RNA sequence: GGGAACGACUCGAGUAGAGUCGAAAAGAUAUGGAAACCGAAGAACGACUGCACAUCGAUCUCGGAAACGAGGGAGUGUGGUCGGGAGGUUUCCUAAGUCAAAGGUUUUAUCUUCGGAUAAAACCAACCUAGUGUAUUGGUUCGCCAAUACACUAGGAAAAGAAACAACAACAACAAC
Reactivity to 2A3 in 0.01 (KOAc 150mM, MgCl2 10mM, bicine 150mM(pH8.5), 24C), signal-to-noise 4, nucleotides 027 to 126: g010a010u090a030u150g000g000a000a000a010c020c010g140a260a040g010a070a030c010g010a010c020u020g020c000a010c000a200u300c060g120a140u030c020u000c010g040g000a070a070a020c020g000a010g020g020g010a030g000u010g010u020g000g000u000c000g000g000g000a020g000g000u000u000u010c000c000u000a080a000g020u010c050a040a060a230g000g000u000u000u010u010a010u000c030u030u100c300g140g000a010u010a000a010a000a000c000c000a000a010
Reactivity to DMS in 0.01 (KOAc 150mM, MgCl2 10mM, bicine 150mM(pH8.5), 24C), signal-to-noise 5, nucleotides 027 to 126: g010a050u010a300u000g000g010a000a010a010c000c000g000a140a160g010a120a220c020g000a010c000u000g000c000a000c010a250u000c150g000a070u010c000u010c010g010g000a080a070a130c010g000a010g000g000g010a020g030u000g020u000g010g000u000c000g000g000g000a090g000g010u000u010u000c000c000u000a010a060g000u010c050a100a110a120g000g010u000u000u000u000a000u000c000u010u010c220g010g010a020u000a000a000a000a000c000c000a020a040

An RNA of 177 nucleotides, treated with 2A3 and DMS and read out base by base. For DMS, 5,430 sequencing reads were counted. DMS adducts were read by reverse transcription with MarathonRT. The RNA was probed in 150 mM KOAc, 10 mM MgCl2 and 150 mM bicine (pH 8.5) at 24 C.